[RMDB]
RNA sequence: GGGAACGACUCGAGUAGAGUCGAAAAACUUUGACCAGGAGGGACCUCACAACGGCCGAGUACGGCUCAUUUUCCGAGUCUUGAAUGUAGGUGGUCAACUCUUUCUUCACCGCAUCAAGUGUAAUGGUACUUCAUAAGUGUUCGCACUUAUGAAGUAAAAAGAAACAACAACAACAAC
Reactivity to DMS in 0.01 (KOAc 150mM, MgCl2 10mM, bicine 150mM(pH8.5), 24C), signal-to-noise 9, nucleotides 027 to 126: a100c090u010u000u010g010a100c040c030a090g000g010a100g010g010g000a080c050c020u000c070a070c100a080a090c130g010g010c040c020g010a150g010u010a090c080g010g000c020u010c060a050u000u000u010u010c050c040g020a120g000u000c010u000u000g010a070a050u000g020u000a060g030g010u000g000g000u000c090a060a080c200u010c120u000u000u000c040u000u000c020a030c010c010g010c020a020u000c030a020a030g000u010g010u000a050a090u000g010g010
Reactivity to 2A3 in 0.01 (KOAc 150mM, MgCl2 10mM, bicine 150mM(pH8.5), 24C), signal-to-noise 6, nucleotides 027 to 126: a000c030u070u040u110g030a020c010c010a020g010g040a020g030g030g030a040c010c000u030c020a070c010a070a100c070g020g000c020c010g020a040g100u070a060c040g000g010c000u020c040a050u050u100u070u000c040c030g020a030g050u000c000u000u050g080a150a060u050g030u100a180g030g020u020g020g010u030c020a040a130c050u080c010u080u170u020c010u070u080c020a020c010c010g000c010a020u010c010a040a040g040u030g050u230a110a090u150g080g020